[RMDB]
RNA sequence: GGGAACGACUCGAGUAGAGUCGAAAAGAUAUGGACCGAUAUAGCAACAGCUCCGAUAUCGGAAACGAUAUGGAGACAUGCUGCAUCGGUCCUAAGUCAAAGUUGCCUAGCUUCGGCUAGGCAACAACAGAGUAAGUACCUUCGGGUACUUACUCUGAAAAGAAACAACAACAACAAC
Reactivity to 2A3 in 0.01 (KOAc 150mM, MgCl2 10mM, bicine 150mM(pH8.5), 24C), signal-to-noise 3, nucleotides 027 to 126: g010a000u020a020u050g000g010a000c000c000g010a000u010a000u000a020g040c180a130a130c100a300g010c010u010c010c040g190a010u010a010u030c010g000g020a000a010a000c000g000a000u000a000u040g000g010a020g030a000c040a150u300g000c000u000g000c000a000u020c000g030g000u010c000c000u000a000a000g020u000c020a000a070a150g020u000u010g010c000c000u000a000g000c010u050u060c300g130g000c000u000a000g020g000c010a000a000c010a000a000
Reactivity to DMS in 0.01 (KOAc 150mM, MgCl2 10mM, bicine 150mM(pH8.5), 24C), signal-to-noise 4, nucleotides 027 to 126: g000a020u000a060u010g000g000a010c000c000g010a010u000a020u010a010g020c000a200a080c220a190g000c010u000c010c000g000a030u000a010u000c000g020g000a010a020a030c000g020a000u000a010u000g010g000a020g010a010c060a150u020g020c000u000g010c090a010u000c010g000g000u010c000c000u000a000a070g000u000c010a150a130a180g000u010u000g010c000c000u000a000g000c000u010u010c250g030g000c000u010a000g000g000c000a000a000c010a070a230

Structure probing data (2A3 and DMS) for a 177-nucleotide construct. Reactivities are given for positions 27 through 126.